[RMDB]
RNA sequence: GGGAACGACUCGAGUAGAGUCGAAAAUCUGGCACCCUCAAUCAACUCAAUGGGAUACCUAGUGCUAAGGACCUAUGUCUUAGAUUGCAACAUGUUCUCAACAAGCUGCACCAAGUAAAUUUUGAACCAGAGCUGGAAUGGACUCACCGACCUGAGCAACUAGUUAGAGGUUCGCCUCUAACUAGUUAAAAGAAACAACAACAACAAC
Reactivity to 2A3 in 0.01 (KOAc 150mM, MgCl2 10mM, bicine 150mM(pH8.5), 24C), signal-to-noise 5, nucleotides 027 to 156: u050c040u020g050g000c040a070c020c050c030u050c060a060a080u030c020a010a060c070u030c090a040a140u100g030g010g000a020u110a190c010c010u050a060g060u060g080c030u060a050a040g020g010a020c010c030u080a070u120g030u000c020u040u030a100g020a140u100u110g030c010a020a020c010a110u070g030u060u000c030u030c030a050a160c020a030a070g020c020u020g010c040a030c040c010a050a030g020u080a100a050a170u160u140u020u100g030a030a020c030c000a030g000a040g070c030u030g020g040a060a060u060g050g010a040c010u010c030a040c020c010g040a060c000c000u000g010a030g030c020
Reactivity to DMS in 0.01 (KOAc 150mM, MgCl2 10mM, bicine 150mM(pH8.5), 24C), signal-to-noise 3, nucleotides 027 to 156: u000c040u000g030g040c070a070c060c050c000u000c060a120a120u010c030a080a080c090u010c070a080a080u010g040g000g050a150u000a050c020c030u010a050g020u000g010c020u010a120a100g020g010a090c040c080u000a080u000g010u000c020u010u000a100g000a090u000u000g000c050a040a050c080a080u010g010u000u000c030u000c030a120a100c040a050a110g010c030u000g000c000a090c040c030a030a070g020u000a050a080a180u000u000u010u000g020a040a100c050c030a000g020a130g020c040u000g000g010a060a100u020g020g010a080c030u010c030a030c040c000g000a140c030c000u010g030a080g010c110
The record gives the reactivity of an RNA of 207 nucleotides to 2A3 and DMS. The data come from the RNA Mapping Database (RMDB), library OK3TST. DMS adducts were read by reverse transcription with MarathonRT. For 2A3 the reverse transcriptase was SuperScript II with manganese. For DMS, 5,019 sequencing reads were counted.